Structure probing data (DMS and 2A3) for a 177-nucleotide construct.
The DMS profile rests on 3,731 reads.
Values cover nucleotides 27 to 126.
DMS adducts were read by reverse transcription with MarathonRT.
The 2A3 profile rests on 7,271 reads.
RNA sequence: GGGAACGACUCGAGUAGAGUCGAAAAGAUAUGGACCGGUACCAGCGAAGAACUCGGAAACGAGGGAGCUGUGUACCCGGUCCUAAGUCAAAACCGAGUUAAGACUCUUCGGAGUCUUAACUCGGAAGACUAUAGAACUGUUCGCAGUUCUAUAGUCAAAAGAAACAACAACAACAAC
Reactivity to DMS in 0.01 (KOAc 150mM, MgCl2 10mM, bicine 150mM(pH8.5), 24C), signal-to-noise 3, nucleotides 027 to 126: g000a060u000a300u000g000g010a000c000c000g020g000u000a000c010c000a000g000c000g000a140a120g000a090a250c010u000c000g010g010a140a090a220c010g000a030g000g000g000a120g020c000u000g010u000g010u000a010c110c040c020g030g000u000c000c000u000a010a040g000u000c040a080a050a130a150c000c000g000a020g000u000u000a000a000g010a030c000u000c000u000u010c220g000g000a030g000u000c000u000u000a000a000c000u010c010g000g000a010a050
Reactivity to 2A3 in 0.01 (KOAc 150mM, MgCl2 10mM, bicine 150mM(pH8.5), 24C), signal-to-noise 3, nucleotides 027 to 126: g020a010u080a040u160g000g000a000c000c000g010g000u000a000c010c000a010g010c010g220a300a050g070a100a060c000u000c000g000g050a140a060a040c010g000a010g000g010g010a010g010c010u010g120u170g010u160a010c010c020c000g010g000u000c000c010u000a010a010g020u000c010a010a030a040a090c000c010g000a000g000u000u010a000a000g010a000c010u000c050u090u220c300g020g000a000g000u020c000u000u010a000a010c010u000c000g000g000a000a010